[RMDB]
RNA sequence: GGGAACGACUCGAGUAGAGUCGAAAAUAAACAUGUCUCUGAGCCUUGAUGUGCUGUGUACAAUAGGGACCCUCAGCCCUGAGCAACGGGCUGGUUGAGCAGAUUGAUGGAUGAGACUCAAUAGCAAAUACACAGGGCCAGGCAGCCCACUGGCAUCAUGCUACCAAUACUUCGGUAUUGGUAGCAUAAAAGAAACAACAACAACAAC
Reactivity to DMS in 0.01 (KOAc 150mM, MgCl2 10mM, bicine 150mM(pH8.5), 24C), signal-to-noise 1, nucleotides 027 to 156: u010a070a090a060c070a070u010g010u010c010u000c030u040g020a110g050c050c030u000u020g020a190u000g040u000g010c060u000g010u000g020u000a040c080a130a130u000a180g000g010g020a070c020c020c060u000c000a040g020c020c010c010u000g000a250g030c000a090a070c100g000g020g000c010u030g010g010u000u010g010a080g070c040a120g040a180u000u040g010a160u010g000g010a150u000g010a230g010a080c010u000c040a060a060u000a050g030c030a110a030a140u010a100c010a020c100a070g000g040g000c000c010a070g020g000c030a080g020c000c000c000a110c000u010g000g030c050a170u010c080
Reactivity to 2A3 in 0.01 (KOAc 150mM, MgCl2 10mM, bicine 150mM(pH8.5), 24C), signal-to-noise 3, nucleotides 027 to 156: u110a000a070a010c080a050u140g020u040c010u000c000u020g110a070g030c000c020u120u050g010a120u050g050u040g010c000u000g020u020g040u060a040c050a150a120u110a140g010g050g040a110c040c000c000u050c000a040g000c010c020c020u090g030a070g030c050a050a010c070g000g000g000c010u020g030g000u010u010g030a010g000c060a020g040a200u040u080g050a090u180g110g070a110u060g030a000g000a010c000u000c030a020a100u080a100g030c080a050a020a130u080a030c070a020c010a040g010g020g000c000c000a030g010g010c000a020g000c000c000c000a000c000u010g000g000c000a060u090c000